[RMDB]
RNA sequence: GGGAACGACUCGAGUAGAGUCGAAAAUGUAGCCGUCGCUGCCAUAGGCGCGCUCUGGUAUGGCUAUAACUGGUGGACCGUCGGGCGCUUCAUGGUUUCGACAGACGAUGCCUAUGUUCAGGGCGAACGCUCAUUUAAUGUUCGCAUUAAAUGAGCGAAAAGAAACAACAACAACAAC
Reactivity to DMS in 0.01 (KOAc 150mM, MgCl2 10mM, bicine 150mM(pH8.5), 24C), signal-to-noise 6, nucleotides 027 to 126: u010g020u000a130g020c050c030g010u000c020g010c090u010g010c300c010a030u010a090g020g000c090g010c010g010c020u000c070u010g020g020u000a030u010g020g000c020u000a050u010a100a130c230u000g020g020u000g010g000a060c020c030g010u010c220g010g010g020c030g010c020u020u000c080a030u010g000g000u000u000u010c030g010a050c020a080g020a040c040g010a100u010g000c020c010u000a050u010g010u010u000c100a160g010g000g010c030g010a070a150
Reactivity to 2A3 in 0.01 (KOAc 150mM, MgCl2 10mM, bicine 150mM(pH8.5), 24C), signal-to-noise 3, nucleotides 027 to 126: u140g020u050a020g080c060c030g010u020c030g020c080u040g020c000c010a040u040a140g020g000c010g000c010g010c030u010c010u050g030g030u140a100u130g090g000c040u020a030u040a290a100c100u130g110g000u030g030g050a040c000c000g060u110c120g060g030g010c020g010c010u030u040c040a030u040g030g000u010u050u060c030g020a020c020a030g020a010c010g040a070u160g010c000c010u060a090u130g080u030u110c060a050g020g000g020c030g020a050a020